An RNA of 177 nucleotides, treated with 2A3 and DMS and read out base by base. It was measured as part of the RMDB library OK2TRN. The RNA was probed in 150 mM KOAc, 10 mM MgCl2 and 150 mM bicine (pH 8.5) at 24 C. As a SHAPE reagent, 2A3 marks flexible, mostly unpaired nucleotides at the ribose 2'-OH.
RNA sequence: GGGAACGACUCGAGUAGAGUCGAAAACAGUCGCGAAGCGUAAAACCGUCAUGUGCGGUGACGAGAUUAAUCGCGGCACUCGGCAGACGACCAUUACGUUUAAAAUCAUCGCUGGAGGCAGCAAAAACGCAGUAUGCAUCUUCGGAUGCAUACUGCGAAAAGAAACAACAACAACAAC
Reactivity to 2A3 in 0.01 (KOAc 150mM, MgCl2 10mM, bicine 150mM(pH8.5), 24C), signal-to-noise 1, nucleotides 027 to 126: c000a030g060u080c010g050c040g110a060a030g040c000g070u040a000a000a000a190c020c000g030u050c060a270u240g090u160g020c020g000g050u020g080a000c040g010a010g000a170u170u150a130a170u140c010g000c000g010g000c010a020c020u050c030g000g030c000a030g020a040c010g040a010c090c000a110u060u080a020c030g060u050u120u110a080a100a010a020u040c030a020u100c040g000c000u010g040g030a010g090g000c000a040g000c010a120a030a040a010a040
Reactivity to DMS in 0.01 (KOAc 150mM, MgCl2 10mM, bicine 150mM(pH8.5), 24C), signal-to-noise 1, nucleotides 027 to 126: c070a180g030u000c100g000c010g030a030a130g000c010g040u000a060a100a130a100c090c000g040u000c010a210u010g000u000g040c040g010g050u010g020a050c010g000a040g010a080u010u010a100a120u000c040g000c010g000g000c000a110c000u010c040g000g000c000a050g020a040c070g000a070c140c040a280u000u000a060c010g010u000u000u000a150a020a130a100u000c120a090u000c060g000c010u000g000g010a110g000g000c030a060g050c130a090a050a080a030a230